[RMDB]
The record gives the reactivity of an RNA of 177 nucleotides to DMS and 2A3.
RNA sequence: GGGAACGACUCGAGUAGAGUCGAAAAAUCAAGGGAGUAGCAGACGGCUAGCCGUGAUUGUAUCGUCAAUACGGAAUUUCGGUUUCCGGUACAAUCUUAAACAGCGAGACUUGUUUAAGAAAAUAAAAUCUCCAUUAUACUUCGGUAUAAUGGAGAUAAAAGAAACAACAACAACAAC
Reactivity to DMS in 0.01 (KOAc 150mM, MgCl2 10mM, bicine 150mM(pH8.5), 24C), signal-to-noise 7, nucleotides 027 to 126: a020u010c030a050a040g000g020g000a090g010u000a040g020c020a140g030a090c110g010g010c030u000a050g010c010c010g020u000g010a020u010u000g000u000a080u000c030g020u020c100a060a130u010a060c040g000g000a050a050u010u000u010c060g010g010u010u000u010c010c010g000g010u020a050c160a060a070u000c000u000u000a010a010a030c010a020g000c050g010a190g010a130c100u000u010g000u000u000u000a020a040g000a040a050a080a070u040a040a040a100
Reactivity to 2A3 in 0.01 (KOAc 150mM, MgCl2 10mM, bicine 150mM(pH8.5), 24C), signal-to-noise 7, nucleotides 027 to 126: a000u070c040a040a010g090g010g010a090g070u040a010g020c020a010g060a150c030g070g000c030u070a020g080c020c020g030u050g020a020u010u030g030u050a070u020c020g050u040c040a020a050u130a140c030g020g060a070a080u080u080u140c060g070g010u020u030u010c010c000g000g000u010a020c030a020a010u010c000u000u020a020a040a010c020a010g020c040g100a050g050a140c050u060u040g020u040u010u040a040a010g030a010a080a020a030u170a030a130a020
The RNA was probed in 150 mM KOAc, 10 mM MgCl2 and 150 mM bicine (pH 8.5) at 24 C. It was measured as part of the RMDB libraries RFM100 and RFMREP. DMS adducts were read by reverse transcription with MarathonRT.